[RMDB]
RNA sequence: GGGAACGACUCGAGUAGAGUCGAAAAUGGAGUAGCCUUCAAGCCCCCUGACUUGAAAGAAGUCAAGUUCAUAGAAAAGGACUUUUCUAGGAUGGCUUGGUACGACAAAUCUAGAGCAAUAGGGACAACUCGACAAUGUAUUCGUACAUUGUCGAGUAAAAGAAACAACAACAACAAC
Reactivity to DMS in 0.01 (KOAc 150mM, MgCl2 10mM, bicine 150mM(pH8.5), 24C), signal-to-noise 4, nucleotides 027 to 126: u010g010g000a100g010u000a050g010c050c040u020u050c020a020a040g020c000c000c130c060c050u000g010a070c010u010u010g010a100a130a140g030a080a040g010u000c000a030a070g000u020u000c030a060u010a060g000a020a030a060a020g010g000a160c110u010u010u010u000c070u010a010g010g000a060u020g010g020c030u000u000g000g000u030a030c100g000a100c060a030a070a070u040c030u000a050g010a070g000c040a010a050u050a060g010g020g030a090c200a140
Reactivity to 2A3 in 0.01 (KOAc 150mM, MgCl2 10mM, bicine 150mM(pH8.5), 24C), signal-to-noise 7, nucleotides 027 to 126: u130g010g020a060g030u090a040g100c020c000u050u090c030a020a020g010c000c000c000c000c020u010g020a020c010u060u030g090a070a100a080g220a090a010g070u010c010a000a020g020u010u060c060a100u130a180g150a060a070a010a020g060g040a060c000u050u030u020u030c050u080a030g020g040a100u120g040g010c000u010u020g030g010u040a040c040g040a010c100a030a090a030u050c060u080a040g020a010g060c040a060a150u060a140g070g000g030a040c030a060
Chemical mapping of a 177-nucleotide RNA with DMS and 2A3. Reactivities are given for positions 27 through 126. The RNA was probed in 150 mM KOAc, 10 mM MgCl2 and 150 mM bicine (pH 8.5) at 24 C. It was measured as part of the RMDB library OK1LIB. For DMS, 7,467 sequencing reads were counted. For DMS the reverse transcriptase was MarathonRT.